[RMDB]
RNA sequence: GGGAACGACUCGAGUAGAGUCGAAAAGAUCGGAAACAGCAGGAGGUGAGUCCGCCUUAUGUGAAGGAUCGGCUGAAACACGAGGAAAUACUGAGCCAACGCAAGACGGUAGCCGAACAGUAGCAACAAAACGCUUACGUGUUCGCACGUAAGCGAAAUUAAUCCUGAUGUUCGCAUCAGGAUUAAUAAAAGAAACAACAACAACAAC
Reactivity to DMS in 0.01 (KOAc 150mM, MgCl2 10mM, bicine 150mM(pH8.5), 24C), signal-to-noise 3, nucleotides 027 to 156: g020a080u000c020g000g000a110a110a070c050a140g020c050a070g020g020a090g030g020u000g020a130g010u000c020c030g030c010c030u000u020a040u010g000u020g010a110a120g010g000a120u000c030g000g020c050u000g010a150a050a100c070a090c070g010a060g020g000a060a080a140u000a050c050u010g010a130g020c050c010a040a120c050g010c030a080a110g010a150c030g020g020u010a070g010c010c030g000a050a040c040a050g020u000a090g000c030a060a120c040a050a070a090a140c010g020c010u000u000a020c010g040u010g030u010u010c300g020c030a010c020g030u000a000a000g000c000g010a000a020
Reactivity to 2A3 in 0.01 (KOAc 150mM, MgCl2 10mM, bicine 150mM(pH8.5), 24C), signal-to-noise 5, nucleotides 027 to 156: g040a040u100c040g020g050a050a050a030c020a040g070c010a020g010g040a010g000g050u040g030a040g040u030c040c030g030c010c010u130u080a140u150g120u070g090a040a010g040g030a040u080c060g010g000c020u050g010a070a080a030c070a020c070g030a030g030g070a050a090a030u160a110c040u050g010a010g030c020c030a050a020c070g000c040a060a010g030a020c040g040g030u030a030g010c010c000g000a010a020c010a030g060u120a020g050c040a000a040c010a060a110a040a000c010g010c000u000u000a000c000g010u000g050u040u070c220g020c110a000c000g000u000a000a000g000c000g010a000a020

Chemical mapping of a 207-nucleotide RNA with DMS and 2A3.
The RNA was probed in 150 mM KOAc, 10 mM MgCl2 and 150 mM bicine (pH 8.5) at 24 C.
As a SHAPE reagent, 2A3 marks flexible, mostly unpaired nucleotides at the ribose 2'-OH.
The DMS profile rests on 7,337 reads.
DMS adducts were read by reverse transcription with MarathonRT.